[RMDB]
An RNA of 177 nucleotides, treated with 2A3 and DMS and read out base by base. 2A3 adducts were read by reverse transcription with SuperScript II with manganese. The 2A3 profile rests on 7,243 reads. The DMS profile rests on 5,640 reads. The RNA was probed in 150 mM KOAc, 10 mM MgCl2 and 150 mM bicine (pH 8.5) at 24 C.
RNA sequence: GGGAACGACUCGAGUAGAGUCGAAAAUCUCGUUCAAUGCUGGGUCUUACCACUCAGACUGUUGAUUCCUCACAGGGUUCAGAAUACCAGUACGUUAUCUUCUGUCAAACAGCAGAUACGGCACAUGCCACUAUAAGAUCUUCGGAUCUUAUAGUGGAAAAGAAACAACAACAACAAC
Reactivity to 2A3 in 0.01 (KOAc 150mM, MgCl2 10mM, bicine 150mM(pH8.5), 24C), signal-to-noise 6, nucleotides 027 to 126: u010c010u010c020g080u140u070c040a060a030u060g020c000u020g000g010g030u010c020u040u090a050c020c020a020c010u020c010a030g020a170c020u090g070u060u040g030a060u060u070c010c010u060c010a040c040a050g080g010g050u090u080c050a050g060a190a070u070a150c030c010a040g040u070a050c020g070u120u060a010u010c010u050u000c000u020g070u060c050a120a150a160c000a090g020c000a000g000a000u010a020c010g010g010c050a020c010a060u120g040
Reactivity to DMS in 0.01 (KOAc 150mM, MgCl2 10mM, bicine 150mM(pH8.5), 24C), signal-to-noise 6, nucleotides 027 to 126: u000c040u000c020g010u000u000c060a060a040u010g020c000u000g000g000g000u010c030u000u000a170c290c300a040c010u000c020a020g010a100c090u000g020u000u010g010a080u000u000c040c020u000c070a120c180a080g010g000g000u000u000c050a100g010a110a090u000a030c040c020a090g010u000a040c020g010u000u000a000u010c000u000u000c000u000g000u010c270a110a070a300c020a010g010c070a010g000a020u000a020c020g000g000c100a050c090a080u000g010